[RMDB]
RNA sequence: GGGAACGACUCGAGUAGAGUCGAAAAUAGCAACAGCAAGGUUUUCAAUCGCUUCCCCGAGAACGCGAUUCUCAUGCGCCCGCCUGCCCCCACCAUCAUCAGCAUCAGCGAGAACGUGCCUCAGGUGACGGACCACGGCACCAUUGCUCUCAAAAACUGAAUAAUCAUGUUUCGACAUGAUUAUUCAAAAAGAAACAACAACAACAAC
Reactivity to 2A3 in 0.01 (KOAc 150mM, MgCl2 10mM, bicine 150mM(pH8.5), 24C), signal-to-noise 3, nucleotides 027 to 156: u130a010g020c010a010a050c030a040g040c020a030a140g040g020u040u070u120u150c090a070a070u040c020g000c020u030u010c000c000c030c050g150a150g000a140a010c060g010c020g070a070u090u000c030u020c010a070u140g000c030g030c030c020c020g020c010c020u030g020c000c020c090c000c000a020c010c000a050u100c010a010u010c010a010g020c010a030u050c020a020g040c010g040a010g020a050a030c040g010u050g010c000c000u050c020a030g040g000u030g040a070c050g010g020a020c000c010a030c040g010g030c010a000c010c010a030u050u090g010c000u000c000u020c060a090a080a040a040a060c050
Reactivity to DMS in 0.01 (KOAc 150mM, MgCl2 10mM, bicine 150mM(pH8.5), 24C), signal-to-noise 3, nucleotides 027 to 156: u000a120g040c020a050a120c050a080g020c010a080a150g020g010u000u000u000u000c090a080a080u010c050g000c030u000u000c000c030c050c090g000a110g030a030a050c060g020c050g000a220u000u000c020u000c050a060u000g010c090g000c020c010c020g060c030c020u000g100c010c010c040c010c030a110c030c010a070u000c050a070u010c030a120g000c020a110u000c060a110g010c060g010a110g020a070a080c080g020u000g000c050c020u000c060a070g000g030u000g020a070c030g000g010a150c030c060a060c000g020g030c030a040c020c020a250u000u010g010c030u000c040u000c020a070a060a080a050a130c200